Source: RMDB library RFMREP, as collected in RNAgym. Chemical mapping of a 177-nucleotide RNA with 2A3 and DMS. 2A3 adducts were read by reverse transcription with SuperScript II with manganese. The reactions ran in a buffer of 150 mM KOAc, 10 mM MgCl2 and 150 mM bicine (pH 8.5), at 24 C. The DMS profile rests on 2,732 reads.

RNA sequence: GGGAACGACUCGAGUAGAGUCGAAAAAGUGAACUCCUCAUAGCAUCUUCUUUGGAAUUACUCAGGAACCAGAACUUUUUACACAAAUGUAAGAAAUUCUACCAAGGAGUCCCCUUACCUAACAGCAGUGAUAAUUAAUGUUCGCAUUAAUUAUCACAAAAGAAACAACAACAACAAC
Reactivity to 2A3 in 0.01 (KOAc 150mM, MgCl2 10mM, bicine 150mM(pH8.5), 24C), signal-to-noise 4, nucleotides 027 to 126: a010g070u050g020a040a040c000u000c030c010u020c050a070u070a060g050c030a100u030c030u150u000c010u080u130u140g040g030a110a050u180u070a090c060u040c110a060g050g030a040a040c040c010a020g020a020a050c020u050u060u010u040u060a060c070a010c030a080a300a170u160g010u030a020a000g010a020a020a000u060u020c000u010a070c000c030a030a020g030g000a000g020u030c010c000c000c000u020u030a070c000c020u040a130a030c020a040g050c020a020
Reactivity to DMS in 0.01 (KOAc 150mM, MgCl2 10mM, bicine 150mM(pH8.5), 24C), signal-to-noise 4, nucleotides 027 to 126: a050g000u000g020a050a050c050u000c000c010u010c100a090u010a090g020c070a080u000c050u000u010c020u020u000u000g020g000a100a120u010u010a050c070u010c100a070g020g000a070a070c180c120a030g000a020a010c010u000u000u000u000u000a020c020a140c130a120a090a050u020g010u010a020a020g000a020a040a020u000u000c020u000a110c110c060a080a030g010g020a040g010u000c010c010c020c020u000u000a100c050c030u010a060a080c130a040g020c170a080